The record gives the reactivity of an RNA of 207 nucleotides to 2A3 and DMS. Values cover nucleotides 27 to 156. For 2A3, 1,023 sequencing reads were counted. For 2A3 the reverse transcriptase was SuperScript II with manganese. Values are in units of 0.01, from 0 to 300, in steps of 10.

RNA sequence: GGGAACGACUCGAGUAGAGUCGAAAAGAAUCAUCUGCUGCAAGUUUCCACUUCUCCUUGAAAAGAAGUCUGAACAGCACUGAGGAAGAUUACUUAAAGUGCUUAGAUCAAUGUUUGAGCAAGGAUUACCUAGACAACAUAGCAAGACAUUUAAACCAUCCACGUCAUCAUUCGUGAUGACGUGGAUAAAAGAAACAACAACAACAAC
Reactivity to 2A3 in 0.01 (KOAc 150mM, MgCl2 10mM, bicine 150mM(pH8.5), 24C), signal-to-noise 3, nucleotides 027 to 156: g020a010a050u090c020a010u010c020u010g010c010u010g010c060a010a100g030u050u050u010c040c000a070c010u070u060c010u000c000c050u080u100g090a060a080a030a030g020a060a010g020u000c090u070g010a060a030c030a060g000c000a000c010u070g030a080g120g060a090a120g130a250u150u220a170c010u000u110a130a080a010g010u000g000c000u070u030a020g010a030u080c090a080a130u140g030u060u060u150g080a050g020c000a030a030g040g030a050u040u080a100c030c030u050a060g080a090c020a030a030c050a050u040a010g050c030a050a020g060a030c020a040u210u250u260a040a050a010c110c000
Reactivity to DMS in 0.01 (KOAc 150mM, MgCl2 10mM, bicine 150mM(pH8.5), 24C), signal-to-noise 1, nucleotides 027 to 156: g050a180a100u000c030a070u000c040u040g000c030u000g040c060a070a070g030u000u010u000c030c080a130c010u000u000c010u000c000c050u000u010g000a180a060a100a020g000a050a060g050u000c020u040g030a110a130c150a020g000c010a030c060u000g000a110g020g010a140a100g010a110u000u000a070c040u000u000a090a090a110g020u000g000c050u000u010a010g000a120u000c050a040a040u020g010u030u000u000g070a120g050c050a140a060g000g040a130u000u000a050c030c010u000a080g010a160c040a010a090c000a040u010a090g020c070a070a240g010a120c040a060u000u000u010a130a050a030c030c180